Chemical mapping of a 177-nucleotide RNA with DMS and 2A3. 2A3 adducts were read by reverse transcription with SuperScript II with manganese. It was measured as part of the RMDB library OK2TRN. For DMS, 1,320 sequencing reads were counted.
RNA sequence: GGGAACGACUCGAGUAGAGUCGAAAAAGCGCAGUUCAGCGUGGUGCUGCCGCGCCGCGACGGCGUCGAGUACUCGGUGGAGCAUGCGGUCAUAGCUGGCCAGGACCGGUUUCUGAUCCUGCACAACCCUUUCACGGACAUUCGUGUCCGUGAAAGGAAAAGAAACAACAACAACAAC
Reactivity to DMS in 0.01 (KOAc 150mM, MgCl2 10mM, bicine 150mM(pH8.5), 24C), signal-to-noise 2, nucleotides 027 to 126: a100g010c070g010c000a030g010u010u000c040a060g000c040g020u010g020g030u010g000c070u020g010c100c090g010c060g010c010c000g020c170g050a100c130g000g010c020g000u000c100g000a070g000u000a040c080u020c040g000g000u020g010g000a110g000c020a080u000g020c000g000g020u000c030a050u000a140g010c020u010g000g010c110c080a090g000g010a020c010c040g000g000u000u020u010c030u000g000a070u000c110c020u010g000c080a070c160a070a110c120
Reactivity to 2A3 in 0.01 (KOAc 150mM, MgCl2 10mM, bicine 150mM(pH8.5), 24C), signal-to-noise 1, nucleotides 027 to 126: a020g030c010g060c000a000g030u040u040c000a020g020c050g060u110g040g040u080g080c030u040g040c040c030g020c010g000c000c010g050c100g130a060c070g000g030c030g000u130c080g010a040g010u040a040c050u010c030g110g070u070g020g050a080g080c060a070u130g010c030g030g000u050c020a050u090a160g060c130u100g000g000c040c030a030g000g030a030c000c010g070g000u080u060u010c020u000g010a050u040c030c020u060g000c020a010c030a070a110c000